[RMDB]
RNA sequence: GGGAACGACUCGAGUAGAGUCGAAAAGAUAUGGAGUGUAUACGCAUCCCUGGAGCGUUGAAAUCGGAAACGAUGGAGCUCCCUGGAUGAAAUACACUCCUAAGUCAAAGAUAGCUUCGGCUAUCAAUCUACUUAUUUACUUCGGUAAAUAAGUAGAAAAAGAAACAACAACAACAAC
Reactivity to DMS in 0.01 (KOAc 150mM, MgCl2 10mM, bicine 150mM(pH8.5), 24C), signal-to-noise 5, nucleotides 027 to 126: g000a030u010a300u010g000g010a010g020u000g000u000a010u000a050c300g010c000a010u000c000c000c030u010g010g000a020g020c000g000u000u010g010a070a140a030u000c000g010g000a130a100a180c000g000a010u000g000g000a130g010c000u000c000c000c010u000g000g010a000u000g000a020a030a010u000a010c000a000c000u000c000c010u000a010a050g010u000c020a110a130a130g000a010u000a000g000c010u000u010c200g010g000c000u000a000u000c000a110a150
Reactivity to 2A3 in 0.01 (KOAc 150mM, MgCl2 10mM, bicine 150mM(pH8.5), 24C), signal-to-noise 4, nucleotides 027 to 126: g060a040u080a060u210g000g000a010g010u010g050u010a000u010a040c280g000c020a010u000c010c000c000u000g010g000a000g000c030g170u300u040g010a020a030a010u010c000g010g040a080a060a060c010g000a010u010g000g030a010g000c000u000c010c010c010u000g000g000a000u000g000a030a020a000u000a000c000a000c010u000c000c000u010a010a000g010u000c010a030a040a100g000a010u000a000g000c040u080u070c300g120g000c000u000a010u020c000a010a040
This 177-nucleotide RNA was probed chemically with DMS and 2A3. It was measured as part of the RMDB library TTRDEL. Reactivities are given for positions 27 through 126. For DMS the reverse transcriptase was MarathonRT. The 2A3 profile rests on 10,651 reads.